[RMDB]
RNA sequence: GGGAACGACUCGAGUAGAGUCGAAAAUCAAACGAUUUCGAUCGUUUGAAACGGACCACUCCUGCGGGAGUUAACGCCAUACGGACAGCCGGGUCCACUGCCAGUCAUUCGGUUUCGACCGAAUGAACACAUCGACCAAGUUCGCUUGGUCGAUGUGAAAAGAAACAACAACAACAAC
Reactivity to DMS in 0.01 (KOAc 150mM, MgCl2 10mM, bicine 150mM(pH8.5), 24C), signal-to-noise 2, nucleotides 027 to 126: u000c000a000a000a000c000g000a000u000u010u030c150g010a030u000c000g050u000u000u010g000a030a100a150c120g020g010a020c000c020a270c000u000c000c000u020g010c110g010g000g000a010g010u000u010a020a070c230g010c060c070a090u000a050c150g010g000a080c030a080g000c050c030g000g020g010u000c020c020a210c060u000g010c040c070a140g010u000c000a000u010u010c000g000g010u000u010u060c220g000a040c000c010g030a010a000u000g010a050a120
Reactivity to 2A3 in 0.01 (KOAc 150mM, MgCl2 10mM, bicine 150mM(pH8.5), 24C), signal-to-noise 2, nucleotides 027 to 126: u040c000a010a000a000c000g000a020u070u060u220c200g110a040u020c010g020u000u000u020g000a010a010a010c060g010g000a010c000c000a040c040u020c010c000u060g020c300g120g010g000a000g000u020u080a100a000c050g080c010c000a080u100a140c070g080g040a100c020a010g080c030c040g130g000g020u000c020c000a000c010u010g020c000c060a050g070u020c000a000u010u000c000g050g020u070u060u070c190g100a000c010c010g000a000a000u000g000a010a000
An RNA of 177 nucleotides, treated with DMS and 2A3 and read out base by base. Values cover nucleotides 27 to 126. It was measured as part of the RMDB library M2PK50.